[RMDB]
RNA sequence: GGGAACGACUCGAGUAGAGUCGAAAAGGUCCGUUCAUACAUCGGAGCCUGGCGACCUAAACGGUCGUGUCAUAUGUAAGCACCAGGUGCCAUCUCCGAGUGGGUAUCGGCCGGCUCCAUAAAUCGGUCAUCGGUUCCGCUUCGGUGGGACCGAUGAAAAAGAAACAACAACAACAAC
Reactivity to DMS in 0.01 (KOAc 150mM, MgCl2 10mM, bicine 150mM(pH8.5), 24C), signal-to-noise 5, nucleotides 027 to 126: g010g010u030c000c010g020u020u010c090a090u030a050c100a110u010c070g000g000a030g000c120c080u000g020g020c000g000a030c010c010u010a050a080a120c140g000g000u000c090g010u000g000u010c060a100u030a110u020g000u040a070a150g030c100a110c070c050a040g020g020u010g000c050c040a040u010c020u000c000c020g010a070g010u010g000g000g000u020a040u010c050g000g030c010c010g000g000c080u000c010c030a070u030a050a080a090u030c050g000g010
Reactivity to 2A3 in 0.01 (KOAc 150mM, MgCl2 10mM, bicine 150mM(pH8.5), 24C), signal-to-noise 9, nucleotides 027 to 126: g040g020u090c020c010g000u040u050c040a050u070a220c040a170u050c040g010g000a010g020c010c040u040g020g010c020g050a050c000c010u080a140a150a050c120g000g020u030c030g020u040g030u030c020a040u130a060u270g140u200a080a080g040c020a030c020c010a020g040g020u020g030c020c010a060u060c020u000c020c010g010a030g020u070g010g060g010u120a050u100c020g030g010c000c000g000g010c000u000c000c000a040u170a080a090a040u120c060g040g010

Overview: Conditions: 150 mM KOAc, 10 mM MgCl2 and 150 mM bicine (pH 8.5), 24 C. Structure probing data (DMS and 2A3) for a 177-nucleotide construct. For 2A3 the reverse transcriptase was SuperScript II with manganese. For 2A3, 16,055 sequencing reads were counted.